[RMDB]
RNA sequence: GGGAACGACUCGAGUAGAGUCGAAAAGGCGGGCGAGUGGGGUGUGUGGCCGAAAGCGCCUUGUACGCGCGCCGUGUGAAUGCUUUGUGCGGGUAGGGAGAUGGCGGCCACCGUCGUAUCCCCAUAGGCGGCUAUCGUGGUUCGCCAUGGUAGCCGCAAAAGAAACAACAACAACAAC
Reactivity to 2A3 in 0.01 (KOAc 150mM, MgCl2 10mM, bicine 150mM(pH8.5), 24C), signal-to-noise 3, nucleotides 027 to 126: g050g000c020g010g000g010c010g030a040g050u090g000g010g010g000u000g000u020g000u000g020g000c000c000g060a030a010a000g060c020g000c020c010u010u060g060u090a040c030g000c000g000c000g000c010c010g010u030g020u030g070a170a090u140g000c000u090u020u120g070u060g010c020g000g000g030u030a020g010g050g000a010g000a010u040g050g020c010g000g010c030c000a030c010c000g050u020c000g010u020a180u040c010c020c000c000a060u050a080g030
Reactivity to DMS in 0.01 (KOAc 150mM, MgCl2 10mM, bicine 150mM(pH8.5), 24C), signal-to-noise 5, nucleotides 027 to 126: g010g010c060g000g000g000c080g010a130g030u000g000g000g010g020u010g000u030g020u010g000g000c010c020g010a080a090a140g010c040g010c010c040u010u020g010u020a080c230g000c050g000c010g010c050c080g000u000g000u020g000a100a090u020g000c040u010u040u020g010u010g010c040g010g000g000u010a120g010g000g000a140g000a150u010g000g000c010g010g000c010c020a030c020c050g000u010c080g000u010a090u010c010c010c000c030a090u030a070g010